The data come from the RNA Mapping Database (RMDB), library RNAMAK. This 207-nucleotide RNA was probed chemically with 2A3.
RNA sequence: GGGAACGACUCGAGUAGAGUCGAAAACAAAGCCCUUCGGGGCUUUGAAAAAAGAUAUGGACGACUUAGACAAACCUACCCACCUCCAAUAUCGGAAACGAUAUGGAGAGGGUUCGAGUCGUCCUAAGUCAAAAACAAGCACUUUCGAGUGCUUGAACACUAGGGCAAGUUUCGACUUGCCCUAGUGAAAAGAAACAACAACAACAAC
Reactivity to 2A3 in 0.01 (KOAc 150mM, MgCl2 10mM, bicine 150mM(pH8.5), 24C), signal-to-noise 2, nucleotides 027 to 156: c010a000a000a000g000c000c000c120u050u110c300g050g000g030g000c000u000u020u010g010a020a000a010a000a000a020g050a020u110a050u090g000g000a020c000g000a010c020u070u060a220g040a100c140a010a190a030c010c090u160a180c020c080c000a160c100c030u000c000c010a180a150u010a000u000c010g010g010a000a010a040c010g000a000u010a010u000g010g010a000g020a040g050g040g020u010u030c020g000a000g000u000c000g000u000c000c000u000a010a010g000u000c000a000a000a000a110a130c000a000a000g090c070a000c020u090u130u130c300g140a020g020u010g000c000u000u010g000a050a000